[RMDB]
RNA sequence: GGGAACGACUCGAGUAGAGUCGAAAACAUAUCAUAUCCACCGUCUUCCGCCUCACACUCCCUGCGCACUCAUGUGCCAAUGAGAACAGCAGUAACCGCUCGAGGGGGUUGAGGGUCUGAUGCGAGACGCUUGAGCGUGGUUCGCCACGCUCAAGCGAAAAGAAACAACAACAACAAC
Reactivity to 2A3 in 0.01 (KOAc 150mM, MgCl2 10mM, bicine 150mM(pH8.5), 24C), signal-to-noise 2, nucleotides 027 to 126: c050a110u280a030u160c050a050u030a140u090c020c000a040c010c010g020u030c020u060u000c000c000g020c070c000u050c000a030c000a000c050u050c000c010c020u060g060c050g000c010a000c020u150c060a030u020g070u120g070c000c020a050a050u060g020a040g020a140a000c030a030g060c000a000g010u040a130a070c010c090g000c000u030c000g160a020g000g030g000g000g000u000u020g030a000g040g030g020u020c050u090g010a000u160g030c090g020a010g010a040